[RMDB]
RNA sequence: GGGAACGACUCGAGUAGAGUCGAAAAGGGCGCUUCGGCGCCCAAACAAUACCGGACUAUGAAAGCCCACCUCCGAUGAGACGUAGGUUUUCAUAGUACCAGUACCUAAAAGGCAUCUUCGGAUGCCCCAGAUAUCAUACUUCGGUAUGAUAUCUGGAAAAGAAACAACAACAACAAC
Reactivity to 2A3 in 0.01 (KOAc 150mM, MgCl2 10mM, bicine 150mM(pH8.5), 24C), signal-to-noise 3, nucleotides 027 to 126: g000g000g000c010g000c040u040u090c230g110g000c020g030c030c000c000a000a000a000c000a000a030u060a020c020c010g000g000a000c000u010a000u010g000a000a010a000g000c020c000c000a010c000c010u010c040c050g300a300u300g030a090g020a090c070g020u010a020g000g000u000u010u000u020c000a000u010a000g000u020a160c000c000a000g020u020a030c000c010u080a080a080a020a030g010g000c000a000u030c000u070u120c250g100g000a000u010g010c000c020
Reactivity to DMS in 0.01 (KOAc 150mM, MgCl2 10mM, bicine 150mM(pH8.5), 24C), signal-to-noise 1, nucleotides 027 to 126: g010g030g020c040g060c020u000u020c160g020g030c000g000c020c000c000a010a000a030c060a110a240u000a000c010c030g020g020a050c000u000a010u000g000a000a010a040g000c000c000c030a010c000c070u000c010c140g020a180u000g000a100g000a010c220g000u000a060g000g030u000u000u000u000c020a010u000a000g000u000a030c000c000a010g000u000a020c020c000u010a030a080a060a080g000g010c000a010u000c000u000u030c090g040g000a010u000g000c000c010
Source: RMDB library RFMREP, as collected in RNAgym. Structure probing data (2A3 and DMS) for a 177-nucleotide construct. For DMS the reverse transcriptase was MarathonRT. For DMS, 1,376 sequencing reads were counted.